RNA sequence: GGGAACGACUCGAGUAGAGUCGAAAACCUAGUCUUCGGACUAGGAAAAAAGCGUACUACGGUAGGACAACAGCUGUGUAUUGGCAUAUCCCAAAUAGGAUAUGCAGGCACAGACAUGUCCAAACGUAUCGCAAAAACAUGCCUUUCGAGGCAUGAACGCACAUAUGGGGUUCGCCCCAUAUGUGCGAAAAGAAACAACAACAACAAC
Reactivity to 2A3 in 0.01 (KOAc 150mM, MgCl2 10mM, bicine 150mM(pH8.5), 24C), signal-to-noise 2, nucleotides 027 to 156: c000c000u000a000g020u010c010u030u120c300g080g000a010c030u030a000g000g000a100a060a000a000a000a010g030c070g010u080a100c060u030a010c000g020g100u080a020g040g000a000c000a080a020c060a120g050c020u000g000u000g030u030a300u150u180g210g030c020a000u000a000u000c050c030c020a110a230a200u300a120g000g000a020u010a000u000g000c000a000g000g060c010a000c020a020g100a020c000a060u060g000u000c020c000a030a230a000c000g000u000a000u290c010g000c010a030a020a030a030a030c000a000u000g010c020c000u020u160u120c260g050a020g000g000c000a000u000g010a010a040

Conditions: 150 mM KOAc, 10 mM MgCl2 and 150 mM bicine (pH 8.5), 24 C. Chemical mapping of a 207-nucleotide RNA with 2A3. The 2A3 profile rests on 1,126 reads.